[RMDB]
RNA sequence: GGGAACGACUCGAGUAGAGUCGAAAAUGUGGUUGUGCAUACCUGUAGUCCCAUCUACUGGGGAGACUGAGGUAGGAGGAUCCCUUGAGUCCGGGAGGUCAAGGCUGCCACCAUUAUCAUACCACUGCACUCCAGCCUGGGUGACAGAGUGACACCCACCUACCGGAAACUUCGGUUUCCGGUAGGUAAAAGAAACAACAACAACAAC
Reactivity to 2A3 in 0.01 (KOAc 150mM, MgCl2 10mM, bicine 150mM(pH8.5), 24C), signal-to-noise 1, nucleotides 027 to 156: u110g000u030g000g050u060u030g070u110g020c040a010u040a120c010c000u020g030u110a060g200u080c000c040c020a030u050c030u120a140c040u030g010g000g040g000a060g010a020c060u060g020a030g110g000u060a040g040g060a040g020g020a040u030c000c000c000u000u010g070a050g050u000c100c090g030g010g010a020g010g010u090c040a020a030g000g010c000u020g010c010c000a030c010c000a060u060u150a080u190c030a040u030a070c010c020a050c030u030g000c010a000c010u080c050c000a040g020c020c020u080g000g000g020u020g040a030c020a030g130a040g060u070g000a020c010a020c020c010c000
The record gives the reactivity of an RNA of 207 nucleotides to 2A3. Conditions: 150 mM KOAc, 10 mM MgCl2 and 150 mM bicine (pH 8.5), 24 C. For 2A3 the reverse transcriptase was SuperScript II with manganese. It was measured as part of the RMDB library OK3TST.